Chemical mapping of a 177-nucleotide RNA with 2A3 and DMS. It was measured as part of the RMDB library OK1LIB.
[RMDB]
RNA sequence: GGGAACGACUCGAGUAGAGUCGAAAAUGAACCCACACACUAAUCUUAGCAUCACUGUGAGUGGGACAACCUGUACCUCCUGAUACGAUGCAAUAUGAAAUACGAGAUAUACAACAUCAUCUAUGUAGUAAUACUGGUACUUCGGUACCAGUAUUACAAAAGAAACAACAACAACAAC
Reactivity to 2A3 in 0.01 (KOAc 150mM, MgCl2 10mM, bicine 150mM(pH8.5), 24C), signal-to-noise 9, nucleotides 027 to 126: u110g020a040a080c000c010c010a010c000a000c000a000c020u180a130a150u150c050u130u160a060g040c040a020u050c010a030c130u060g030u040g080a040g030u040g010g010g050a040c030a020a090c010c020u080g040u150a120c000c010u050c010c030u060g030a040u050a170c080g020a020u020g010c010a020a040u180a090u170g160a080a110a020u180a040c090g030a010g030a080u080a000u060a120c100a110a030c020a090u140c010a020u000c080u090a120u170g070u060a060
Reactivity to DMS in 0.01 (KOAc 150mM, MgCl2 10mM, bicine 150mM(pH8.5), 24C), signal-to-noise 3, nucleotides 027 to 126: u030g020a090a130c000c000c000a020c020a230c020a050c060u030a030a050u030c060u040u010a190g000c090a040u000c040a100c200u000g000u020g010a080g030u010g000g000g000a170c130a040a060c040c030u000g030u030a070c090c040u000c020c050u000g000a140u030a060c250g000a050u020g010c040a110a110u050a090u050g020a090a040a090u020a040c190g020a050g000a050u000a010u020a040c200a050a110c100a010u000c100a030u000c040u010a080u060g030u000a050
Overview:
For DMS, 3,342 sequencing reads were counted. The reactions ran in a buffer of 150 mM KOAc, 10 mM MgCl2 and 150 mM bicine (pH 8.5), at 24 C. DMS adducts were read by reverse transcription with MarathonRT.